[RMDB]
RNA sequence: GGGAACGACUCGAGUAGAGUCGAAAAAGCAGGACUACGCUCCUGCAUGGGUAGACGAAUUGACCCCAACUGAAGUUCAAUUCUAACGUUAAAAGGAGUUUUAUAUGACUGGACGUACGCGUCCAGAUGACGAUUUCAUUCUUCGGAAUGAAAUCAACUGCUAAUAUUAGUUCGCUAAUAUUAGCAGAAAAGAAACAACAACAACAAC
Reactivity to 2A3 in 0.01 (KOAc 150mM, MgCl2 10mM, bicine 150mM(pH8.5), 24C), signal-to-noise 4, nucleotides 027 to 156: a000g010c020a010g010g010a000c070u200a090c300g050c160u000c000c000u000g000c000a010u020g000g000g000u130a110g040a200c080g010a030a000u000u000g000a000c010c020c020c000a080a040c130u270g080a000a000g040u090u010c010a000a020u000u000c000u080a110a060c120g050u100u270a070a040a040a050g170g010a080g020u020u030u140u060a210u070a070u200g150a090c000u000g000g000a000c010g010u070a020c170g020c010g110u000c000c010a000g000a010u040g060a010c080g000a000u000u000u020c010a010u010u000c000u050u060c100g080g000a000a000u000g000a000a000a000u010c000a000a030
Reactivity to DMS in 0.01 (KOAc 150mM, MgCl2 10mM, bicine 150mM(pH8.5), 24C), signal-to-noise 2, nucleotides 027 to 156: a130g020c000a000g000g010a070c020u000a120c140g040c050u000c000c010u000g000c010a050u000g000g010g020u000a170g010a070c100g020a070a050u000u010g020a040c010c000c000c020a050a250c240u000g020a070a010g000u010u010c020a040a060u000u000c000u000a120a080c070g010u010u000a110a090a080a100g000g040a220g020u000u010u010u000a080u000a080u010g010a210c000u000g050g000a040c000g030u020a100c230g050c030g010u000c010c010a010g010a000u010g010a070c140g010a010u000u000u000c000a000u000u000c010u000u010c300g030g020a030a000u000g000a010a030a010u010c010a040a090